Source information: The record gives the reactivity of an RNA of 207 nucleotides to 2A3.
RNA sequence: GGGAACGACUCGAGUAGAGUCGAAAACGCUGGGCAAUAAGACGGGAGCUCUGAUGUAAUCGUUGAUCUACUGAAGCGCGCACGGUAGGGAGAUUACGGAUGAGCGACGAUCGUCUUAUUGCCUGUGCUGAAGCGCGCACGGCAACCGAAAGGUGCGGGUCCAUAACAGUUUCGACUGUUAUGGACCAAAAGAAACAACAACAACAAC
Reactivity to 2A3 in 0.01 (KOAc 150mM, MgCl2 10mM, bicine 150mM(pH8.5), 24C), signal-to-noise 1, nucleotides 027 to 156: c020g000c010u040g010g030g000c000a020a010u000a010a010g000a000c000g010g010g010a010g000c010u010c010u010g030a010u020g000u000a000a000u000c020g120u230u030g000a000u000c000u010a000c000u010g070a250a050g000c000g000c000g000c000a000c020g020g010u000a010g010g000g000a010g000a000u010u000a000c000g000g000a010u010g000a000g000c000g000a000c000g000a000u000c010g000u000c000u010u000a000u000u000g000c000c000u000g000u000g000c000u010g020a120a060g000c000g000c000g000c000a000c000g000g000c000a010a010c000c010g080a090a020a020g020g000u030g010c040g030
Values cover nucleotides 27 to 156.